Chemical mapping of a 207-nucleotide RNA with DMS and 2A3. Source: RMDB library OK3TST, as collected in RNAgym. For 2A3, 2,195 sequencing reads were counted.
[RMDB]
RNA sequence: GGGAACGACUCGAGUAGAGUCGAAAACGAUGGUUACGUCGCUGUCGAGAUCGACGCCGACGUGCAGUGGCAAGGGUUGCACAGUUGCAACGGUCACUGCAAUGACGAGCGUGGUUGGUGGACGCUGCGUGAUUCGCUGCGCGCAGUGAGCGAGGCCUCCGUGAAAGUAUUUCGAUACUUUCACGGAAAAAGAAACAACAACAACAAC
Reactivity to DMS in 0.01 (KOAc 150mM, MgCl2 10mM, bicine 150mM(pH8.5), 24C), signal-to-noise 2, nucleotides 027 to 156: c060g000a040u000g020g020u000u000a080c080g030u010c070g020c020u000g050u000c020g020a110g000a200u030c010g000a080c010g000c060c000g020a090c060g050u000g000c000a030g030u000g000g020c010a100a150g030g020g030u000u000g040c000a110c090a300g030u010u000g000c010a010a060c000g040g010u000c000a020c000u000g000c010a050a040u020g010a070c030g000a080g000c020g010u010g010g020u000u000g020g000u000g000g000a100c050g020c010u000g000c000g030u000g000a090u010u000c190g040c090u010g040c040g000c020g030c010a060g010u000g020a140g020c050g010a110g020g010c030c110
Reactivity to 2A3 in 0.01 (KOAc 150mM, MgCl2 10mM, bicine 150mM(pH8.5), 24C), signal-to-noise 3, nucleotides 027 to 156: c050g040a060u110g080g010u120u130a060c070g070u040c040g000c050u040g060u080c060g050a020g050a240u100c050g070a010c010g020c040c010g090a070c030g000u030g010c000a000g000u000g000g010c050a180a200g250g020g040u000u000g000c020a070c050a210g260u300u170g010c000a010a000c000g020g000u000c000a000c000u000g000c000a020a010u070g020a020c030g010a000g020c000g000u030g000g040u030u010g030g070u090g060g010a030c050g010c020u020g000c010g010u020g000a050u160u220c100g020c180u150g010c030g000c010g000c010a030g000u030g080a040g010c040g010a010g000g040c020c000
The RNA was probed in 150 mM KOAc, 10 mM MgCl2 and 150 mM bicine (pH 8.5) at 24 C.